[RMDB]
RNA sequence: GGGAACGACUCGAGUAGAGUCGAAAAUAGGCGCGGCCGUACGGCCCGAUCAUGCGCGCGCGACACACUGGCCGCACAGUACCAGCGCGCAUGGUACAUGCAGCUCAUGCAGCGUACCGUACGCUGGGUCUGAUGCGUGAUUCGUCACGCAUCAGACAAAAGAAACAACAACAACAAC
Reactivity to 2A3 in 0.01 (KOAc 150mM, MgCl2 10mM, bicine 150mM(pH8.5), 24C), signal-to-noise 1, nucleotides 027 to 126: u180a040g080g030c060g000c020g050g050c090c050g020u040a040c080g020g040c040c080c040g020a040u050c020a030u050g010c000g000c010g000c000g040c080g130a010c000a000c020a010c170u050g090g000c080c060g050c070a030c030a000g050u060a070c000c030a010g000c010g000c000g000c020a010u030g010g000u050a050c020a030u040g040c010a000g000c050u100c250a100u070g000c020a040g000c000g040u030a030c010c010g010u010a000c010g000c030u020g000g150
Reactivity to DMS in 0.01 (KOAc 150mM, MgCl2 10mM, bicine 150mM(pH8.5), 24C), signal-to-noise 2, nucleotides 027 to 126: u000a050g000g010c050g030c050g000g000c080c060g040u010a050c060g010g000c060c020c050g000a050u010c060a030u010g010c020g030c060g000c040g030c070g030a110c130a130c170a100c120u000g020g030c030c070g010c050a060c030a060g020u000a180c050c030a190g000c010g020c050g060c020a010u010g010g010u010a030c080a100u000g000c010a040g020c190u010c220a070u000g000c010a050g000c090g020u020a080c030c010g010u000a040c010g010c030u010g000g010